[RMDB]
RNA sequence: GGGAACGACUCGAGUAGAGUCGAAAAAAGGUGGUCGCGGUUGUUCUUCCGGUGAAUGCUGCCAUGGUGGUUACGUUGCAAUAUUCCGUGGGCCGCCGACUUAACCCGGCUAACAUCCGCGCGCUGACGUGAUUUAAUUAUUCGUAAUUAAAUCACGAAAAGAAACAACAACAACAAC
Reactivity to 2A3 in 0.01 (KOAc 150mM, MgCl2 10mM, bicine 150mM(pH8.5), 24C), signal-to-noise 6, nucleotides 027 to 126: a010a010g070g010u120g030g080u260c010g000c010g010g010u000u010g010u020u010c040u120u030c010c000g020g010u040g050a170a050u140g040c080u100g050c090c050a110u140g020g010u010g010g030u030u030a020c030g060u100u110g030c020a030a060u060a130u300u090c020c010g000u040g000g130g000c000c010g000c000c010g010a020c000u020u040a020a020c020c000c000g000g000c010u010a010a000c010a010u010c010c010g010c000g000c000g000c010u020g010a010
Reactivity to DMS in 0.01 (KOAc 150mM, MgCl2 10mM, bicine 150mM(pH8.5), 24C), signal-to-noise 9, nucleotides 027 to 126: a080a120g010g010u000g020g030u010c020g030c030g010g010u000u000g000u000u000c210u000u000c020c010g010g010u000g010a120a080u010g020c160u000g010c060c060a100u010g040g020u000g010g010u000u000a030c050g000u000u000g000c180a120a110u010a120u010u000c150c010g010u000g010g010g010c020c030g010c020c010g000a030c040u000u000a140a180c250c010c000g010g000c300u010a020a020c030a020u000c010c010g020c010g010c060g000c020u000g010a160
This 177-nucleotide RNA was probed chemically with 2A3 and DMS. The reactions ran in a buffer of 150 mM KOAc, 10 mM MgCl2 and 150 mM bicine (pH 8.5), at 24 C. Reactivities are given for positions 27 through 126. 2A3 adducts were read by reverse transcription with SuperScript II with manganese.